[RMDB]
RNA sequence: GGGAACGACUCGAGUAGAGUCGAAAAAAGCGCUGGGACUGCUCGCGGAGGAGGCGUCCGACGGGACGCAGGUUUCGUCGGCCAUGCGCAUGCGCGCCAUCCAGCAGCUCGCGCGCAACGUGCAGACGGUGCUGGAUUCGUUCGAGCGCGGCACGGCCGUAUGUCCGGCAUUCGUGCCGGACAUACGAAAAGAAACAACAACAACAAC
Reactivity to 2A3 in 0.01 (KOAc 150mM, MgCl2 10mM, bicine 150mM(pH8.5), 24C), signal-to-noise 2, nucleotides 027 to 156: a000a020g060c050g030c060u140g000g000g070a120c040u090g010c010u020c040g080c020g050g030a070g020g110a030g050g000c040g030u010c000c000g010a040c040g030g000g000a000c010g040c110a040g000g230u010u040u020c020g010u010c020g000g010c000c000a120u190g000c020g000c000a000u140g080c090g010c000g000c020c010a010u010c010c010a010g000c000a020g020c000u020c040g040c020g000c000g000c060a070a040c080g000u030g000c010a010g010a140c060g100g090u040g060c020u020g020g020a050u130u100c090g010u050u000c020g050a000g000c020g000c050g000g000c040a020c020g010g000c020